This 177-nucleotide RNA was probed chemically with DMS and 2A3. The 2A3 profile rests on 102,389 reads. DMS adducts were read by reverse transcription with MarathonRT. The RNA was probed in 150 mM KOAc, 10 mM MgCl2 and 150 mM bicine (pH 8.5) at 24 C.
RNA sequence: GGGAACGACUCGAGUAGAGUCGAAAACACUAGCCCGAGGUUACGACACGAAUGGGCUGGUACAAAUUACGUAUAGCUCUUGCAGCAGCGUGUCGAAGCGUACCCGAGCUAUACGCCUGGGGUAGUGGAUAUUGAGGAAUUUCGAUUUUUCAAUAUCAAAAGAAACAACAACAACAAC
Reactivity to DMS in 0.01 (KOAc 150mM, MgCl2 10mM, bicine 150mM(pH8.5), 24C), signal-to-noise 9, nucleotides 027 to 126: c080a030c020u000a040g010c000c010c000g010a070g010g010u010u010a110c030g000a020c010a000c010g010a100a090u030g010g010g020c000u000g020g050u010a030c080a090a120a130u040u040a140c130g000u000a020u010a030g000c010u000c010u010u030g020c110a070g000c110a110g010c010g000u000g000u000c020g010a150a070g010c060g010u020a100c050c040c050g010a120g010c010u000a090u020a060c120g010c020c010u000g000g000g000g000u010a030g010u010g000
Reactivity to 2A3 in 0.01 (KOAc 150mM, MgCl2 10mM, bicine 150mM(pH8.5), 24C), signal-to-noise 9, nucleotides 027 to 126: c050a000c010u020a040g160c000c010c010g120a080g050g010u090u150a060c030g020a010c040a010c040g070a120a140u190g000g000g000c000u010g050g000u030a030c040a010a140a050u290u160a060c080g010u010a010u010a020g000c000u020c010u040u210g060c090a080g010c030a030g050c040g010u010g020u030c020g030a070a010g020c010g030u080a090c000c020c010g010a010g000c000u030a030u040a130c080g010c000c010u030g010g000g000g020u030a030g020u030g070